[RMDB]
RNA sequence: GGGAACGACUCGAGUAGAGUCGAAAAACCUUAGGCUCAGAAGAUUGCUACUUGCGAUGCAAGCGGUGAGUUUUUUGAGGUUUUUUGUAAAUUCCACUUCGGUGGAGUGUAUCAGGAGCUAAAACCACAAACAGUAAGCCUUCGGGCUUACUGUUUGAAAAGAAACAACAACAACAAC
Reactivity to 2A3 in 0.01 (KOAc 150mM, MgCl2 10mM, bicine 150mM(pH8.5), 24C), signal-to-noise 4, nucleotides 027 to 126: a000c010c010u060u110a100g040g000c000u000c000a020g010a050a010g020a090u000u050g010c000u010a050c030u050u060g050c060g230a130u300g000c020a020a010g030c030g040g040u090g130a050g030u000u000u010u010u020u020g020a030g030g000u050u010u010u000u010u000g050u010a050a040a030u030u010c000c000a000c000u020u050c220g070g000u000g000g000a010g030u010g000u000a110u140c090a040g030g030a010g010c050u100a070a030a040a020c050c050a020
Reactivity to DMS in 0.01 (KOAc 150mM, MgCl2 10mM, bicine 150mM(pH8.5), 24C), signal-to-noise 2, nucleotides 027 to 126: a010c000c000u000u020a050g020g010c010u000c010a090g000a070a050g010a020u000u000g000c000u010a210c040u000u000g010c090g010a170u040g010c010a000a000g000c000g000g010u000g010a030g010u000u000u020u020u010u000g000a000g000g020u000u000u000u000u000u010g020u000a060a060a050u000u000c000c000a000c010u000u050c110g070g020u000g010g020a020g010u000g000u020a090u000c050a050g050g000a060g020c110u040a050a040a100a090c100c100a220
An RNA of 177 nucleotides, treated with 2A3 and DMS and read out base by base. For DMS the reverse transcriptase was MarathonRT. 2A3 adducts were read by reverse transcription with SuperScript II with manganese. The 2A3 profile rests on 3,233 reads. The RNA was probed in 150 mM KOAc, 10 mM MgCl2 and 150 mM bicine (pH 8.5) at 24 C.